[RMDB]
RNA sequence: GGGAACGACUCGAGUAGAGUCGAAAAAGAUGCACAGGAGAUUCUUUCUAAAGCUAAAGCUGUUGCAUUAGAGCAGGGUGUGGAUGCAACAACUUUGAUUGUUACUGGCGACCCAUCUUCUGUGUUACGGAGUGAGUAUAUUCGUAUACUCACUCCGAAAAGAAACAACAACAACAAC
Reactivity to DMS in 0.01 (KOAc 150mM, MgCl2 10mM, bicine 150mM(pH8.5), 24C), signal-to-noise 4, nucleotides 027 to 126: a090g010a130u010g010c000a020c000a020g010g010a020g000a030u000u000c100u010u010u010c050u000a140a090a080g000c080u010a030a040a040g010c070u010g010u000u000g020c020a050u000u000a080g010a170g000c120a070g000g010g020u010g030u000g020g000a040u000g000c010a000a000c000a000a010c010u010u000u000g020a120u010u000g010u000u010a070c080u000g000g020c170g000a080c090c050c040a090u000c010u000u000c010u000g020u000g010u000u010a090
Reactivity to 2A3 in 0.01 (KOAc 150mM, MgCl2 10mM, bicine 150mM(pH8.5), 24C), signal-to-noise 4, nucleotides 027 to 126: a000g070a070u210g000c000a010c000a010g010g000a000g010a010u110u050c030u090u170u000c060u180a100a060a030g020c030u050a070a040a000g020c030u040g030u060u040g000c000a010u010u070a060g050a030g060c050a070g070g150g040u160g060u170g160g000a010u020g000c010a000a000c010a010a010c020u070u080u090g150a230u080u150g120u150u100a080c070u040g070g000c030g020a050c020c010c000a010u010c000u010u000c000u010g010u000g000u010u000a020